This 207-nucleotide RNA was probed chemically with 2A3. Values cover nucleotides 27 to 156. For 2A3 the reverse transcriptase was SuperScript II with manganese.
RNA sequence: GGGAACGACUCGAGUAGAGUCGAAAACCGGCCGGCGGGCCGACGAGGGUGUGCACGUCGAGGUCGUGGCCUCGCGGUACGGGCUCGGCUGGGUCGUGGACUGGUUCAAGGAGCGCGCGAGCGAGGAGCGGCCCAUGCGGGUCGUGCUCCAAGUGCGAUCAUUGAUCCGUUUCGACGGAUCAAUGAUAAAAGAAACAACAACAACAAC
Reactivity to 2A3 in 0.01 (KOAc 150mM, MgCl2 10mM, bicine 150mM(pH8.5), 24C), signal-to-noise 1, nucleotides 027 to 156: c000c000g000g030c030c010g090g030c010g000g070g050c020c020g030a030c000g020a020g040g030g090u150g010u120g090c040a060c230g100u190c080g090a080g110g000u090c070g090u120g050g050c000c000u030c000g040c010g010g000u070a100c000g000g070g010c060u070c030g090g000c060u030g000g020g040u070c070g060u070g000g020a090c030u030g000g050u060u070c020a070a050g050g000a080g130c040g000c050g000c000g010a030g040c000g090a010g010g000a030g020c010g000g000c000c080c020a050u300g180c300g000g020g030u070c040g020u160g000c010u000c010c000a000a050g000u020g020c010g000
Source information:
The RNA was probed in 150 mM KOAc, 10 mM MgCl2 and 150 mM bicine (pH 8.5) at 24 C.